[RMDB]
RNA sequence: GGGAACGACUCGAGUAGAGUCGAAAAGAUAUGGAUCCAUGGUCUCGAUAAGCUACAUUCGGAAACGAAUGCUAGCUUUUGACGAGGAGAGUGGAUCCUAAGUCAAACAUGAGGUUCGCCUCAUGAACAGGGUUAACAUCUUCGGAUGUUAACCCUGAAAAGAAACAACAACAACAAC
Reactivity to DMS in 0.01 (KOAc 150mM, MgCl2 10mM, bicine 150mM(pH8.5), 24C), signal-to-noise 2, nucleotides 027 to 126: g000a020u000a290u000g000g000a000u000c010c000a010u000g000g000u000c000u000c010g020a260u020a020a010g030c000u000a030c000a000u010u000c000g040g000a080a040a130c000g010a020a000u000g000c300u000a010g010c000u000u000u000u020g010a180c180g000a060g060g030a040g000a170g010u000g000g000a040u000c000c000u010a010a090g010u000c030a180a100a280c010a000u000g000a000g000g010u000u020c300g020c000c000u000c000a010u020g020a090a220
Reactivity to 2A3 in 0.01 (KOAc 150mM, MgCl2 10mM, bicine 150mM(pH8.5), 24C), signal-to-noise 1, nucleotides 027 to 126: g090a020u050a010u180g000g000a000u000c000c020a040u060g220g110u120c100u000c040g190a220u090a300a020g000c010u000a000c000a000u000u030c040g000g030a120a020a040c000g010a000a000u010g040c030u000a020g000c000u020u000u000u000g060a030c000g110a000g010g070a010g030a040g040u000g000g000a010u000c000c020u040a050a000g020u010c040a090a040a070c040a040u050g010a000g010g100u100u230c300g120c060c000u010c000a000u040g000a070a020